[RMDB]
RNA sequence: GGGAACGACUCGAGUAGAGUCGAAAACUUGAGAAAACACAUAAGCCUGCAGGGAACAUUAGGCCCUGUUAAAACUAUUUUCCUGGCUUGCAGGCACAUACCAAACUCCCAGGUAAAGCACAUUAAAGUGGCUAAACAUUCACUCAGAGGGGAAGGAACCUAACUAUCGGUUCGCCGAUAGUUAGGUAAAAGAAACAACAACAACAAC
Reactivity to 2A3 in 0.01 (KOAc 150mM, MgCl2 10mM, bicine 150mM(pH8.5), 24C), signal-to-noise 2, nucleotides 027 to 156: c010u040u060g030a010g030a040a110a200a070c070a010c000a050u120a170a000g010c000c000u000g000c020a030g000g000g010a100a060c010a130u120u220a030g060g050c000c010c030u030g030u080u060a000a030a080a020c000u030a030u080u040u020u020c020c010u020g180g000c060u080u120g000c000a010g000g030c050a010c010a030u050a040c000c050a020a050a070c040u020c010c010c000a000g020g000u060a070a000a010g000c040a020c000a190u110u180a120a030a140g010u020g070g000c030u030a010a110a000c040a020u120u110c040a010c080u030c040a020g010a070g010g020g010g030a030a020g100g000a010
Reactivity to DMS in 0.01 (KOAc 150mM, MgCl2 10mM, bicine 150mM(pH8.5), 24C), signal-to-noise 1, nucleotides 027 to 156: c040u000u000g000a090g030a080a020a180a110c040a080c030a140u020a290a280g020c030c040u000g000c010a180g020g000g010a050a040c060a060u000u020a060g000g000c020c050c050u010g050u000u000a050a050a080a040c000u000a050u000u000u000u000c020c000u000g020g060c040u020u010g020c030a070g050g010c050a060c100a190u050a030c070c000a030a110a160c090u000c050c020c020a040g000g020u010a060a060a100g000c040a030c020a140u000u000a060a070a120g030u010g020g060c070u000a080a050a050c090a080u000u000c060a060c030u000c000a070g000a040g010g010g000g000a120a060g020g020a130

Description: Chemical mapping of a 207-nucleotide RNA with 2A3 and DMS. High DMS reactivity at an A or C suggests that its Watson-Crick edge is free. For 2A3, 935 sequencing reads were counted. The reactions ran in a buffer of 150 mM KOAc, 10 mM MgCl2 and 150 mM bicine (pH 8.5), at 24 C.